[RMDB]
Source: RMDB library OK3TST, as collected in RNAgym. Structure probing data (2A3) for a 207-nucleotide construct. The 2A3 profile rests on 381 reads. The RNA was probed in 150 mM KOAc, 10 mM MgCl2 and 150 mM bicine (pH 8.5) at 24 C.
RNA sequence: GGGAACGACUCGAGUAGAGUCGAAAAUGCUUUAAUUAAUGCAACCGAUAGAACAGGCGGUCCAACUGGCAAUGCUAAACGUAGCAUCAAUAGCGUUCAAGGAAAAACUGUAACUGUAUCUGCAAGAGAUAAUGCAAGUGGAACUUUACAGGGAAUAGAACAUUGUGGACUUCGGUCCACAAUGUUCAAAAGAAACAACAACAACAAC
Reactivity to 2A3 in 0.01 (KOAc 150mM, MgCl2 10mM, bicine 150mM(pH8.5), 24C), signal-to-noise 1, nucleotides 027 to 156: u040g000c000u090u040u160a140a080u250u220a070a060u150g000c020a040a060c080c000g070a100u060a110g100a060a040c040a080g090g000c030g000g070u030c030c040a120a000c120u020g000g030c040a070a000u000g010c000u000a070a120a050c080g100u010a040g020c000a020u110c010a000a070u020a160g040c000g050u110u070c080a010a010g050g100a070a000a000a000a000c010u030g000u030a050a030c110u060g020u070a270u040c020u000g020c020a020a020g100a000g040a080u120a200a150u270g000c010a030a090g010u020g030g010a010a010c010u000u000u000a020c020a020g090g050g060a010a000u070a080